[RMDB]
About this RNA: Structure probing data (DMS and 2A3) for a 177-nucleotide construct. The data come from the RNA Mapping Database (RMDB), library TTRDES. For DMS, 4,437 sequencing reads were counted. The reactions ran in a buffer of 150 mM KOAc, 10 mM MgCl2 and 150 mM bicine (pH 8.5), at 24 C. For 2A3 the reverse transcriptase was SuperScript II with manganese.

RNA sequence: GGGAACGACUCGAGUAGAGUCGAAAAAAGAUAUGGAGUCGACUACCCACCGGAUUGCAUGUACGUUGAAACAAUCUCGGAAACGAGAUUGUGGAGUACACGAUCCGAGGUCGACUCCUAAGUCAAACAUACACUACUGCUUCGGCAGUAGUGUAUGAAAAGAAACAACAACAACAAC
Reactivity to DMS in 0.01 (KOAc 150mM, MgCl2 10mM, bicine 150mM(pH8.5), 24C), signal-to-noise 4, nucleotides 027 to 126: a170a150g000a050u000a100u010g000g000a000g020u000c010g010a020c010u000a070c060c010c090a300c020c000g000g000a010u000u000g000c100a210u000g010u000a000c000g000u000u010g000a240a180a020c000a000a000u000c000u000c000g000g000a020a030a050c000g010a030g000a010u000u010g000u000g000g000a000g020u000a000c000a040c020g000a010u000c000c000g010a060g000g010u000c000g020a000c000u000c000c000u000a020a060g010u010c040a110a120a200
Reactivity to 2A3 in 0.01 (KOAc 150mM, MgCl2 10mM, bicine 150mM(pH8.5), 24C), signal-to-noise 2, nucleotides 027 to 126: a000a000g070a030u060a040u100g010g010a010g000u010c010g000a000c010u110a160c060c090c050a020c030c000g000g000a010u000u030g040c300a280u050g060u020a000c030g300u300u020g000a000a000a000c000a000a000u010c000u000c000g020g010a010a000a010c010g000a000g000a000u010u010g010u000g020g000a010g000u000a000c000a010c000g010a000u010c010c000g000a010g000g000u000c000g010a000c000u020c000c000u000a010a000g020u020c040a080a080a090